The record gives the reactivity of an RNA of 177 nucleotides to DMS and 2A3.

[RMDB]
RNA sequence: GGGAACGACUCGAGUAGAGUCGAAAAAUAAAGCGUAAUCGCAUCCCAGUAGCAAAGAGCAGGGUAAAGGCGAAAGCCGAACUCAAGAUCGCAUCGGGCUAAGAUGCGAUCGUAGCCACGCAAAAAACCUACCUCUUACGUUCGCGUAAGAGGUAGGAAAAGAAACAACAACAACAAC
Reactivity to DMS in 0.01 (KOAc 150mM, MgCl2 10mM, bicine 150mM(pH8.5), 24C), signal-to-noise 3, nucleotides 027 to 126: a050u010a100a070a060g030c010g020u000a130a110u010c040g000c060a150u000c010c000c020a170g010u010a140g010c040a040a040a100g000a170g030c010a110g000g020g010u000a030a060a080g000g000c000g000a070a060a190g000c000c000g010a140a020c020u000c030a090a110g010a010u000c020g020c010a000u000c010g000g060g010c220u000a140a110g010a000u000g000c020g010a010u000c000g000u010a080g010c060c040a090c210g030c090a000a020a080a040a040a040
Reactivity to 2A3 in 0.01 (KOAc 150mM, MgCl2 10mM, bicine 150mM(pH8.5), 24C), signal-to-noise 2, nucleotides 027 to 126: a010u110a010a070a000g000c020g030u060a170a040u190c050g000c000a010u010c050c000c000a000g180u110a030g000c010a050a040a100g060a020g040c020a030g040g010g000u070a130a140a070g000g030c000g040a030a000a000g000c000c000g000a010a010c000u010c020a040a030g000a000u000c000g000c000a000u000c020g080g030g070c100u080a050a080g000a010u000g000c000g000a010u000c000g000u010a000g000c000c000a020c030g000c030a050a100a000a000a030a030
The reactions ran in a buffer of 150 mM KOAc, 10 mM MgCl2 and 150 mM bicine (pH 8.5), at 24 C. For 2A3 the reverse transcriptase was SuperScript II with manganese. The DMS profile rests on 1,808 reads.